[RMDB]
RNA sequence: GGGAACGACUCGAGUAGAGUCGAAAAAUGCGGUCAUGGGGACGACCGACAACCUUCAGCUGAUCGAUCGGGUUUUCCCCUGCGGGUUUAUCAAAUUUCAUGCCUGUGCCCUCGCUUCAGCCAGUACACCUCUACCUAGAUUCGUCUAGGUAGAGGUAAAAGAAACAACAACAACAAC
Reactivity to 2A3 in 0.01 (KOAc 150mM, MgCl2 10mM, bicine 150mM(pH8.5), 24C), signal-to-noise 3, nucleotides 027 to 126: a020u110g010c010g000g000u020c010a050u080g020g000g040g020a010c030g010a010c000c000g020a040c020a020a070c000c020u090u110c060a050g010c010u050g020a020u030c030g020a030u130c070g030g040g040u030u030u110u110c030c010c000c000u010g030c040g040g030g020u030u180u130a050u110c070a040a100a090u220u300u180c050a030u120g020c000c000u030g040u070g010c000c030c040u000c010g000c010u020u040c010a010g010c020c010a010g040u050a060c060
Reactivity to DMS in 0.01 (KOAc 150mM, MgCl2 10mM, bicine 150mM(pH8.5), 24C), signal-to-noise 5, nucleotides 027 to 126: a110u010g010c010g010g010u000c020a120u010g000g010g010g030a140c300g020a020c010c000g000a080c060a050a190c040c020u010u010c150a130g000c040u000g000a040u000c020g020a060u010c130g020g010g010u000u000u000u000c010c000c010c050u000g010c060g010g000g010u000u010u010a030u010c140a040a080a130u000u010u020c120a060u000g000c030c010u000g020u000g000c030c010c020u010c020g000c130u000u000c030a050g020c020c150a090g010u010a080c190